An RNA of 177 nucleotides, treated with 2A3 and DMS and read out base by base. Values cover nucleotides 27 to 126. For DMS, 25,867 sequencing reads were counted. For 2A3, 33,430 sequencing reads were counted. 2A3 is a SHAPE reagent: it acylates the 2'-hydroxyl of flexible nucleotides of all four kinds.
RNA sequence: GGGAACGACUCGAGUAGAGUCGAAAACAAUUGAGCGUCGCACACACACAGACUAAGUCUGACACUGACAGAGCCUAAACCGCUCUGUCAGUGUGCGAGAUAUCGUUCUUUAUGUGAGCAGAGGAAACUUAUUCAUCAGUUUCGACUGAUGAAUAAGAAAAGAAACAACAACAACAAC
Reactivity to 2A3 in 0.01 (KOAc 150mM, MgCl2 10mM, bicine 150mM(pH8.5), 24C), signal-to-noise 9, nucleotides 027 to 126: c020a030a090u060u120g020a030g030c040g060u030c020g020c010a010c000a000c000a000c000a010c010a040g020a010c030u160a270a070g020u000c000u020g040a040c000a000c060u000g000a000c000a000g010a000g000c000c000u050a050a050a040c020c010g000c000u010c000u000g000u010c000a000g010u000g000u000g000c010g010a010g010a010u100a020u110c030g030u070u020c010u030u090u050a200u080g060u030g050a030g010c070a030g060a050g070g100a050a060a030
Reactivity to DMS in 0.01 (KOAc 150mM, MgCl2 10mM, bicine 150mM(pH8.5), 24C), signal-to-noise 9, nucleotides 027 to 126: c040a070a090u010u010g000a060g020c040g020u000c030g010c020a090c070a060c120a080c140a120c070a020g000a020c020u010a110a190g010u000c010u000g010a070c060a030c050u000g000a010c000a010g010a010g010c000c010u010a060a070a120c300c300g000c000u000c000u000g010u000c000a000g010u000g010u000g010c040g010a030g010a070u010a140u010c070g010u010u000c000u000u000u000a050u020g000u010g000a080g010c040a090g010a080g010g000a090a070a130